[RMDB]
RNA sequence: GGGAACGACUCGAGUAGAGUCGAAAACCUGGUUUAUUCGUAAACCAGGAUACGCCGUAGCGCGGUGGUCCCACCUGACCCCAUGCCGAACUCAGAAGUGAAUAUUCCAGACCUUCGGGUCUGGAAAUCUGCGAUUAUUAUUCGUAAUAAUCGCAGAAAAAGAAACAACAACAACAAC
Reactivity to DMS in 0.01 (KOAc 150mM, MgCl2 10mM, bicine 150mM(pH8.5), 24C), signal-to-noise 2, nucleotides 027 to 126: c010c000u000g010g010u000u020u000a020u000u000c170g010u000a010a000a010c000c010a020g010g000a080u000a040c030g020c010c020g010u010a110g020c130g020c050g010g020u000g020g010u000c010c000c010a120c090c040u010g000a110c050c010c010c030a040u010g000c060c070g010a100a080c100u000c040a100g020a110a130g020u010g010a120a080u000a140u000u000c000c010a010g000a040c000c000u000u000c220g030g000g010u000c000u000g000g010a000a020a040
Reactivity to 2A3 in 0.01 (KOAc 150mM, MgCl2 10mM, bicine 150mM(pH8.5), 24C), signal-to-noise 1, nucleotides 027 to 126: c000c000u000g010g000u000u030u030a100u060u090c220g040u070a010a000a000c010c010a010g000g000a070u090a050c050g000c020c000g040u080a060g090c140g000c030g100g030u000g020g060u010c040c000c020a010c000c040u030g110a130c040c000c030c020a010u090g030c010c010g030a080a040c050u050c070a040g020a150a020g110u110g160a110a020u080a110u190u000c000c010a000g000a000c000c000u020u040c170g180g000g000u000c010u000g000g030a000a000a000